[RMDB]
RNA sequence: GGGAACGACUCGAGUAGAGUCGAAAACUCAUCUUCUUUGGUCUCUGCCAUCUGGCUAACCUAAAAACGGACAACACCCUCAUUAGAGCGCUCUAGAAAGACCCUGCAGUGAUUAAGCCAGCUGUCAUGCAGGUCCUCCGCGAGGCCCGUGCCCAGACGUAUCAUUUAACUUCGGUUAAAUGAUACGAAAAGAAACAACAACAACAAC
Reactivity to 2A3 in 0.01 (KOAc 150mM, MgCl2 10mM, bicine 150mM(pH8.5), 24C), signal-to-noise 3, nucleotides 027 to 156: c040u050c030a080u050c060u240u030c020u080u110u110g030g010u040c030u020c030u160g040c020c020a080u060c110u060g000g000c020u020a070a080c000c020u070a080a070a030a030a020c080g060g050a040c030a110a030c010a140c060c010c000u030c060a090u020u130a050g020a010g060c050g010c030u020c020u040a040g060a110a110a020g020a060c040c000c000u020g000c010a110g120u030g140a090u130u100a070a030g030c030c020a020g010c040u040g000u040c010a020u060g000c000a010g000g030u020c010c030u020c000c020g030c040g000a010g050g000c010c000c010g000u030g030c000c000c000a030g010a050
Reactivity to DMS in 0.01 (KOAc 150mM, MgCl2 10mM, bicine 150mM(pH8.5), 24C), signal-to-noise 1, nucleotides 027 to 156: c080u010c050a180u010c050u000u010c020u010u010u000g020g000u000c010u010c090u000g070c040c020a100u000c090u000g030g000c000u000a030a120c020c000u000a030a110a070a090a090c100g000g070a130c030a060a080c020a050c030c000c020u010c120a190u000u000a070g010a150g020c050g000c030u000c020u000a150g020a110a100a080g030a060c060c010c020u020g040c070a050g050u010g030a060u000u030a020a130g010c040c050a060g010c050u010g050u010c060a090u000g040c000a090g050g020u000c000c000u000c050c030g040c080g010a100g020g060c040c010c030g000u000g000c020c010c010a130g040a290

Notes:
An RNA of 207 nucleotides, treated with 2A3 and DMS and read out base by base. For 2A3, 2,228 sequencing reads were counted.